The record gives the reactivity of an RNA of 207 nucleotides to 2A3. The reactions ran in a buffer of 150 mM KOAc, 10 mM MgCl2 and 150 mM bicine (pH 8.5), at 24 C. For 2A3 the reverse transcriptase was SuperScript II with manganese. 2A3 is a SHAPE reagent: it acylates the 2'-hydroxyl of flexible nucleotides of all four kinds.
RNA sequence: GGGAACGACUCGAGUAGAGUCGAAAACGCGUAGCGGUACGCCGCUACGCAAGGCGCAUUUGAACUGUAUUGUACGCCUUGCAUAAAGCAAAAGUACUAAAAAAACGUGCCGUUACGACGGCACGAAAAAACAUCCAUUGGUUCGCCAAUGGAUGAAUCAAAUCCAUCACUUCGGUGAUGGAUUUGAAAAAGAAACAACAACAACAAC
Reactivity to 2A3 in 0.01 (KOAc 150mM, MgCl2 10mM, bicine 150mM(pH8.5), 24C), signal-to-noise 2, nucleotides 027 to 156: c030g000c000g000u000a000g000c000g030g010u020a030c230g110c010c000g000c000u000a000c000g000c000a000a000g010g000c020g010c040a090u100u100u250g060a200a140c080u060g040u130a110u170u050g040u030a050c020g000c000c000u010u020g000c020a070u140a240a180a050g080c030a060a060a010a000g070u090a060c100u210a060a060a000a000a000a030a080c010g000u000g000c010c000g000u020u090a110c300g020a010c020g040g000c000a000c000g000a000a000a000a000a000a000c000a000u000c000c010a000u000u010g070g000u010u010c230g000c050c010a000a000u010g000g000a000u000g000a000a010